[RMDB]
RNA sequence: GGGAACGACUCGAGUAGAGUCGAAAAAAGAUGAUUGUUUUACCUGCCGAUACCGCCGCUUUUACGAAAAACGGAUCAACAUACUUACUCAAGCGCUUUGCAAUUUCAGCGUAAGCAACGCAUUGGUAUUCAUACGGGACAAUCUCACCAACCGUGAUCAAAAGACAGAGUUCGCUCUGUCUUUUGAAAAAGAAACAACAACAACAAC
Reactivity to DMS in 0.01 (KOAc 150mM, MgCl2 10mM, bicine 150mM(pH8.5), 24C), signal-to-noise 2, nucleotides 027 to 156: a050a090g020a140u010g010a080u000u000g010u000u000u000u000a130c030c020u010g040c050c100g000a050u000a030c040c020g020c030c020g020c010u000u010u000u010a300c150g060a050a030a000a020a060c000g000g020a090u010c060a070a070c070a130u000a030c050u000u000a010c010u000c070a060a140g010c030g010c070u000u030u000g030c080a060a300u000u010u030c030a300g010c070g010u000a040a040g010c010a040a050c050g020c050a120u000u010g020g050u000a030u000u000c030a080u000a050c060g050g000g040a160c010a010a030u000c030u000c050a140c030c060a060a160c130c050g000u020g000a150
Reactivity to 2A3 in 0.01 (KOAc 150mM, MgCl2 10mM, bicine 150mM(pH8.5), 24C), signal-to-noise 3, nucleotides 027 to 156: a010a020g060a060u140g000a010u000u010g060u050u070u050u150a050c010c010u010g070c050c010g030a020u020a030c020c000g050c000c010g030c080u060u100u020u140a080c130g130a080a000a010a000a020c030g020g000a040u090c050a030a050c020a100u230a090c020u110u040a040c050u060c160a080a050g000c030g060c090u060u060u050g030c030a020a300u040u100u240c050a050g030c010g100u090a060a020g010c010a020a050c050g000c030a060u030u160g000g000u000a010u050u050c030a020u040a280c060g000g000g000a000c000a000a010u000c030u020c020a040c020c000a000a050c060c010g040u080g010a030
Overview
Structure probing data (DMS and 2A3) for a 207-nucleotide construct. The reactions ran in a buffer of 150 mM KOAc, 10 mM MgCl2 and 150 mM bicine (pH 8.5), at 24 C. Source: RMDB library OK3TST, as collected in RNAgym. 2A3 adducts were read by reverse transcription with SuperScript II with manganese. Reactivities are rounded to 0.1 and cut off at 0 and 3. The DMS profile rests on 3,402 reads.